[RMDB]
RNA sequence: GGGAACGACUCGAGUAGAGUCGAAAAACAGCCUUUACUAACGCCGUAUUUAGGUCUAAGCCCUCUUUAAUGCCUGAUGAUUUUAUGAGCCUUAGGUUAUGAUCAAACGUGAUCGGAGCAUUAUACCAUGUGGAAGGUGUUUCGACACCUUCCACAUAAAAGAAACAACAACAACAAC
Reactivity to DMS in 0.01 (KOAc 150mM, MgCl2 10mM, bicine 150mM(pH8.5), 24C), signal-to-noise 2, nucleotides 027 to 126: a070c140a170g000c040c000u000u000u000a030c170u030a140a100c150g010c060c110g010u000a090u000u010u000a090g010g000u010c000u000a070a160g000c040c000c000u000c110u000u000u000a030a020u000g000c030c040u000g000a050u010g000a100u020u000u000u000a060u030g000a070g000c100c000u030u000a080g010g020u010u010a060u000g010a040u000c040a030a080a070c160g020u020g030a030u000c020g010g010a080g000c040a050u030u010a050u000a080c120c090
Reactivity to 2A3 in 0.01 (KOAc 150mM, MgCl2 10mM, bicine 150mM(pH8.5), 24C), signal-to-noise 1, nucleotides 027 to 126: a000c030a000g030c000c000u060u060u090a050c060u070a130a100c020g010c010c010g010u020a120u030u040u150a030g000g000u000c030u030a080a040g060c000c000c000u040c090u000u030u070a110a030u090g020c010c020u030g000a030u020g010a050u040u090u030u170a100u060g020a050g000c020c010u060u100a090g030g030u100u060a100u150g040a040u070c000a080a060a170c090g050u050g010a000u010c000g010g000a070g060c010a010u020u060a020u080a110c020c020